[RMDB]
RNA sequence: GGGAACGACUCGAGUAGAGUCGAAAAGGCCUCAGCUGCCUCAUCUGUGAAAUGGGGUAGUCCACCCUCCUCAGCCCCUUGUGUGAGAGUUGAAUGAGGCUAUGCAUGUGGAACUCUUAGCACAGUGCCAGGCAUGCAGUGGCACUGAGGACACAUAUCCUCCUAAAUGAUUCGUCAUUUAGGAGGAAAAAGAAACAACAACAACAAC
Reactivity to DMS in 0.01 (KOAc 150mM, MgCl2 10mM, bicine 150mM(pH8.5), 24C), signal-to-noise 2, nucleotides 027 to 156: g010g000c020c010u020c020a080g010c020u000g000c000c020u000c000a020u000c010u010g070u000g030a100a110a050u000g000g030g030g020u000a040g010u000c030c050a050c020c000c010u000c030c060u000c030a090g000c020c010c010c030u020u010g040u000g030u000g010a100g000a040g020u000u010g020a010a090u000g000a030g010g000c040u000a020u000g000c030a080u020g020u000g040g000a070a070c050u000c040u010u000a160g050c060a130c050a050g030u000g030c000c030a110g020g000c050a170u000g020c050a130g010u000g020g000c040a070c020u000g010a080g000g010a050c050a050c050a050u010a170
Reactivity to 2A3 in 0.01 (KOAc 150mM, MgCl2 10mM, bicine 150mM(pH8.5), 24C), signal-to-noise 1, nucleotides 027 to 156: g030g010c000c000u000c000a000g000c000u020g010c020c010u000c000a000u010c020u140g300u170g170a060a070a100u060g000g000g000g000u000a000g000u010c050c020a060c070c010c000u060c000c000u000c010a040g020c000c000c050c060u070u040g010u030g010u050g050a030g000a000g000u030u130g060a000a090u060g010a010g000g000c010u040a030u050g050c030a040u020g000u050g040g020a120a060c010u000c030u070u080a090g000c010a010c000a030g000u020g000c000c000a040g070g000c040a080u140g000c040a040g120u020g010g010c000a000c010u020g010a000g010g020a000c030a000c000a100u090a120